RNA sequence: GGGAACGACUCGAGUAGAGUCGAAAAGCGGGGCUUGAAACGCGGGUAGCGCGCACGCCCGGCGAAGAAGUUCGCAUACGCGGUGUGCUGGUGCCGAAGUGUCUGCUGCAACGGCACGCGCGACACCUAGAACAUACCGUAUUCGUACGGUAUGUAACUGUUAUCAAACUUUCGAGUUUGAUAACAGAAAAGAAACAACAACAACAAC
Reactivity to DMS in 0.01 (KOAc 150mM, MgCl2 10mM, bicine 150mM(pH8.5), 24C), signal-to-noise 3, nucleotides 027 to 156: g000c030g000g000g040g030c030u010u010g000a110a150a050c010g010c050g000g030g010u000a080g010c020g010c030g060c010a090c120g010c000c000c020g010g000c030g010a030a200g010a170a180g030u000u000c010g010c020a110u010a210c070g020c090g070g030u000g020u000g010c020u000g000g020u000g010c010c040g010a030a200g030u000g010u000c080u010g030c080u010g010c090a100a210c050g000g000c010a030c020g010c040g020c000g030a050c010a030c010c010u010a210g000a140a070c000a000u000a010c000c000g010u000a070u010u010c280g010u000a010c000g000g010u010a010u000g000u000a020a100
Reactivity to 2A3 in 0.01 (KOAc 150mM, MgCl2 10mM, bicine 150mM(pH8.5), 24C), signal-to-noise 5, nucleotides 027 to 156: g040c040g000g020g030g020c040u070u050g050a080a130a040c080g010c040g010g040g040u100a040g040c020g010c010g010c030a010c000g000c000c010c010g010g010c010g000a030a020g070a050a020g080u030u030c010g000c040a020u060a220c060g030c100g020g030u020g000u000g020c040u070g020g020u010g000c020c000g020a060a030g050u070g050u130c140u130g090c060u090g000c020a030a030c010g000g000c000a000c010g030c010g000c000g030a020c020a040c030c000u030a050g030a070a000c000a000u000a000c000c000g000u010a010u010u070c190g040u020a000c000g000g000u000a000u000g000u000a040a000